[RMDB]
RNA sequence: GGGAACGACUCGAGUAGAGUCGAAAAAAGAGCAAAUCCCGUAACUGCGAACAACAUCGUACGUUUCUCCCGUCAAGCAGCCCCUGUUGCUGCCUGACCCUAUUAAGGGAGAUGGGGUGAAGUCAGCGUCUGCUAGGAGUUUCGACUCCUAGCAGACAAAAGAAACAACAACAACAAC
Reactivity to 2A3 in 0.01 (KOAc 150mM, MgCl2 10mM, bicine 150mM(pH8.5), 24C), signal-to-noise 2, nucleotides 027 to 126: a000a000g240a000g000c030a070a060a090u110c000c000c000g020u000a020a000c010u020g000c000g030a060a010c040a050a050c000a260u020c010g000u070a030c180g020u000u040u030c020u010c040c000c050g000u030c020a020a000g000c000a000g080c000c000c000c130u240g070u170u120g040c000u000g000c010c000u000g020a000c000c000c000u160a160u090u170a110a070g000g000g000a010g000a020u150g000g000g000g000u010g010a080a020g100u080c060a020g010c060
Reactivity to DMS in 0.01 (KOAc 150mM, MgCl2 10mM, bicine 150mM(pH8.5), 24C), signal-to-noise 2, nucleotides 027 to 126: a030a030g000a120g020c040a040a050a100u030c000c000c050g000u000a090a030c020u000g020c040g000a040a060c130a160a300c300a060u000c040g000u000a020c080g000u000u000u020c010u020c000c000c020g010u000c000a000a070g000c020a010g020c000c070c250c150u030g030u000u000g000c000u000g030c000c050u000g020a000c000c170c150u150a160u000u040a080a090g000g050g050a050g010a010u000g030g000g000g000u000g000a040a190g000u000c040a100g000c150